[RMDB]
RNA sequence: GGGAACGACUCGAGUAGAGUCGAAAACGCAAGGGCACGUAGGAAGCCCACAUGCGCAUCGCGAGCGUCGAUACGCGCAACUCCAAUGCCUACCGAUGCUUGUCCUGGGGUGCGUGCAAACAGCCACAAUUGAGCCUAGUUUCGACUAGGCUCAAUUAAAAGAAACAACAACAACAAC
Reactivity to DMS in 0.01 (KOAc 150mM, MgCl2 10mM, bicine 150mM(pH8.5), 24C), signal-to-noise 4, nucleotides 027 to 126: c070g020c150a110a080g020g010g020c010a050c140g020u000a160g020g010a100a090g000c020c010c020a080c110a050u000g000c030g010c040a040u010c050g020c020g010a050g010c050g050u020c000g020a020u010a020c250g010c080g010c020a040a080c160u020c160c190a090a130u010g000c010c010u000a040c030c030g010a040u000g000c010u000u000g010u000c060c120u000g020g020g000g040u000g000c040g000u010g010c110a030a040a050c120a130g010c060c050a040c140
Reactivity to 2A3 in 0.01 (KOAc 150mM, MgCl2 10mM, bicine 150mM(pH8.5), 24C), signal-to-noise 2, nucleotides 027 to 126: c020g010c030a090a070g040g010g020c050a040c130g080u140a050g130g070a140a030g060c020c070c000a000c010a030u100g000c010g000c000a040u040c040g040c020g070a060g050c030g010u020c000g020a010u050a040c060g060c010g000c040a050a060c050u040c060c050a160a070u080g030c000c000u030a000c000c020g050a030u040g000c000u010u030g020u150c000c030u120g020g070g070g010u010g000c030g000u040g020c000a080a110a040c020a040g110c000c080a040c040

About this RNA
An RNA of 177 nucleotides, treated with DMS and 2A3 and read out base by base. It was measured as part of the RMDB library OK2TST. Values cover nucleotides 27 to 126. The reactions ran in a buffer of 150 mM KOAc, 10 mM MgCl2 and 150 mM bicine (pH 8.5), at 24 C.